[RMDB]
RNA sequence: GGGAACGACUCGAGUAGAGUCGAAAACGUGAUAACUGAUGGCGAAAAGAUUUUGGAUGAAGUAGAGUUCAUCUGCAAUCCUGGAAUCGUUAUCGAGGAAAUCAUCACCAAGAUCACCGGGUUGAAGCAACAGCUUUUGAUUCGUCAAAAGCUGUUGAAAAGAAACAACAACAACAAC
Reactivity to 2A3 in 0.01 (KOAc 150mM, MgCl2 10mM, bicine 150mM(pH8.5), 24C), signal-to-noise 2, nucleotides 027 to 126: c020g020u010g000a050u020a070a070c030u030g000a020u020g040g010c050g000a070a020a030a050g040a000u010u030u040u050g010g000a010u000g020a020a040g020u210a090g020a060g200u030u000c010a000u010c000u000g000c020a000a020u030c030c010u060g170g150a070a100u010c010g000u000u040a030u040c080g050a050g000g070a040a300a020u080c040a010u010c000a020c040c010a000a060g030a100u070c030a030c140c040g000g070g000u060u140g080a060a000g080
Reactivity to DMS in 0.01 (KOAc 150mM, MgCl2 10mM, bicine 150mM(pH8.5), 24C), signal-to-noise 4, nucleotides 027 to 126: c220g010u000g000a000u000a050a300c050u010g030a020u000g010g020c010g000a030a130a160a090g000a020u000u000u000u000g000g000a010u000g000a030a030g000u010a160g000a210g000u000u000c010a010u000c000u000g010c150a050a000u000c020c070u000g000g010a160a080u000c010g000u000u000a020u000c010g010a070g000g020a110a080a090u000c050a020u000c060a100c040c080a060a080g010a080u010c050a100c020c040g010g010g020u010u000g010a100a110g010